[RMDB]
RNA sequence: GGGAACGACUCGAGUAGAGUCGAAAACACCCCGCGUUCGCGCGGGGUGAAACAGGAAGUUGCUAUCUCAAUUACCUGAACAGGCCAUGGUCUGGAUAGCAAAAACUGAUGACUUCGGUCAUCAGAACAACACUCUAACCUUCGGGUUAGAGUGUUGAAAAGAAACAACAACAACAAC
Reactivity to 2A3 in 0.01 (KOAc 150mM, MgCl2 10mM, bicine 150mM(pH8.5), 24C), signal-to-noise 2, nucleotides 027 to 126: c000a010c010c020c000c030g030c000g020u010u060c280g010c010g000c040g120g000g070g010u030g030a010a030a000c020a010g070g090a080a060g070u070u050g010c000u030a010u040c010u030c160a080a300u130u120a070c000c010u030g030a060a010c020a030g060g000c050c000a090u220g070g030u000c030u010g040g000a000u020a010g000c000a010a010a010a010a000c000u000g000a000u000g000a000c010u020u070c240g070g000u010c000a000u000c000a000g000a000a030
Reactivity to DMS in 0.01 (KOAc 150mM, MgCl2 10mM, bicine 150mM(pH8.5), 24C), signal-to-noise 2, nucleotides 027 to 126: c010a020c000c000c000c000g010c000g070u000u030c240g030c020g020c020g020g020g010g010u000g010a010a060a050c100a050g000g020a090a160g010u000u000g000c010u000a020u000c010u000c100a100a080u030u010a060c010c010u000g020a150a180c080a060g010g010c010c100a070u010g030g000u000c100u010g000g000a030u000a010g010c000a020a040a030a060a130c000u000g000a010u010g010a010c000u000u010c160g010g020u020c000a000u000c000a000g000a070a180
The data come from the RNA Mapping Database (RMDB), library M2PK50. An RNA of 177 nucleotides, treated with 2A3 and DMS and read out base by base. For DMS, 1,377 sequencing reads were counted. The 2A3 profile rests on 1,960 reads. The reactions ran in a buffer of 150 mM KOAc, 10 mM MgCl2 and 150 mM bicine (pH 8.5), at 24 C.